Structure probing data (2A3 and DMS) for a 177-nucleotide construct. For 2A3, 90,320 sequencing reads were counted. For 2A3 the reverse transcriptase was SuperScript II with manganese. The DMS profile rests on 51,859 reads. Values cover nucleotides 27 to 126. The RNA was probed in 150 mM KOAc, 10 mM MgCl2 and 150 mM bicine (pH 8.5) at 24 C.
[RMDB]
RNA sequence: GGGAACGACUCGAGUAGAGUCGAAAACUGGUGUACGACACGCAGAGGCAUUGCUCUCGGUGGAGUGAGGCCCUACAUCAGAGUAGGGCCAUGUGGAUCUCAGUGUCGGAGUCCAUUCGGAACCAGGGCGGAAUGGGUCGUUCGCGAUCUAUUUCGCAAAAGAAACAACAACAACAAC
Reactivity to 2A3 in 0.01 (KOAc 150mM, MgCl2 10mM, bicine 150mM(pH8.5), 24C), signal-to-noise 9, nucleotides 027 to 126: c010u000g000g000u020g020u060a020c000g010a000c000a000c010g110c080a030g000a010g030g010c080a150u060u300g020c020u010c010u010c090g100g060u140g050g030a040g010u060g030a120g010g000c010c000c000u010a010c010a080u220c100a050g040a020g180u000a000g000g000g000c000c000a000u030g000u010g020g060a110u050c010u000c030a040g040u000g090u100c050g030g000a010g010u000c000c000a020u080u060c030g030g000a010a000c000c000a000g000g050
Reactivity to DMS in 0.01 (KOAc 150mM, MgCl2 10mM, bicine 150mM(pH8.5), 24C), signal-to-noise 9, nucleotides 027 to 126: c010u000g000g010u000g010u010a120c010g010a040c010a010c010g020c090a100g000a030g000g010c020a200u030u040g010c050u020c000u000c050g010g030u020g000g010a110g020u000g000a130g000g010c000c000c000u000a000c000a090u030c290a150g010a160g000u000a000g000g000g020c020c010a000u000g010u000g010g000a050u030c010u010c010a120g020u010g010u030c120g000g000a070g000u010c010c010a050u020u010c060g000g000a130a070c000c000a010g000g000